The record gives the reactivity of an RNA of 177 nucleotides to DMS and 2A3. The RNA was probed in 150 mM KOAc, 10 mM MgCl2 and 150 mM bicine (pH 8.5) at 24 C. 2A3 adducts were read by reverse transcription with SuperScript II with manganese. DMS adducts were read by reverse transcription with MarathonRT.
[RMDB]
RNA sequence: GGGAACGACUCGAGUAGAGUCGAAAAAGCAACGAGUGUGUGUGGGACGUUUUAUCCCAAGCUCUGAGUAGAGCACGCGCACACACACACCGCGAGCGAGCAUCAGCAGAGCGCAAACGCUGGUAAAGACCUAGAAAGACUUCGGUCUUUCUAGGUCAAAAGAAACAACAACAACAAC
Reactivity to DMS in 0.01 (KOAc 150mM, MgCl2 10mM, bicine 150mM(pH8.5), 24C), signal-to-noise 2, nucleotides 027 to 126: a040g020c030a190a070c020g000a280g010u000g010u000g000u000g040u000g010g020g020a100c000g020u000u000u010u010a130u010c010c020c010a110a090g000c000u000c020u010g000a250g010u000a030g000a010g030c000a070c060g000c020g000c070a110c030a020c010a000c000a010c010a070c060c030g030c020g000a230g010c040g020a060g010c120a060u000c030a100g000c040a080g030a120g010c110g000c100a030a100a170c120g000c030u000g010g000u010a030a090a160
Reactivity to 2A3 in 0.01 (KOAc 150mM, MgCl2 10mM, bicine 150mM(pH8.5), 24C), signal-to-noise 1, nucleotides 027 to 126: a020g110c070a040a070c050g090a170g050u030g000u010g000u000g000u000g010g040g010a070c000g000u000u040u180u190a090u100c010c020c000a010a010g000c000u000c000u120g240a250g140u290a020g130a000g030c000a020c010g030c010g040c010a020c000a000c000a000c000a020c020a000c000c000g000c000g020a000g000c000g000a000g000c050a050u090c010a030g030c010a010g050a080g120c050g010c020a050a070a040c030g000c050u060g000g030u020a110a060a000